[RMDB]
RNA sequence: GGGAACGACUCGAGUAGAGUCGAAAAAACUCCCACCUGGCCGUCCUCCGGACGGCGGGUCACCGGUCAGGCGGUUCCGUCCCACGGCGGUGACCAGCCCGAAAUCGCGCCCCGCGGUCAUAGCGGCGUUGGGAAAUACAUUCGUGUAUUUCCCAACAAAAGAAACAACAACAACAAC
Reactivity to 2A3 in 0.01 (KOAc 150mM, MgCl2 10mM, bicine 150mM(pH8.5), 24C), signal-to-noise 6, nucleotides 027 to 126: a000a000c070u030c020c000c010a010c010c020u060g270g000c000c010g030u080c000c060u300c110c200g070g010a030c000g020g010c000g000g000g010u010c010a020c030c030g070g080u080c030a030g010g040c020g040g020u090u090c050c020g050u050c060c060c010a080c130g010g010c000g000g020u040g020a020c000c000a000g010c000c010c000g070a080a070a030u100c030g000c010g030c020c020c020c030g020c030g040g000u070c050a090u080a140g030c030g050g000c010
Reactivity to DMS in 0.01 (KOAc 150mM, MgCl2 10mM, bicine 150mM(pH8.5), 24C), signal-to-noise 3, nucleotides 027 to 126: a070a010c170u010c010c000c010a150c100c040u000g000g040c010c010g040u000c050c070u040c240c240g020g030a100c220g000g070c020g020g000g010u000c020a070c090c040g000g010u010c050a140g000g000c040g000g000u000u030c070c030g000u010c000c040c090a170c120g000g000c010g000g010u010g000a010c010c000a080g000c000c000c020g010a050a130a050u020c100g000c030g000c080c040c010c030g040c010g000g000u000c070a080u010a140g000c030g010g010c190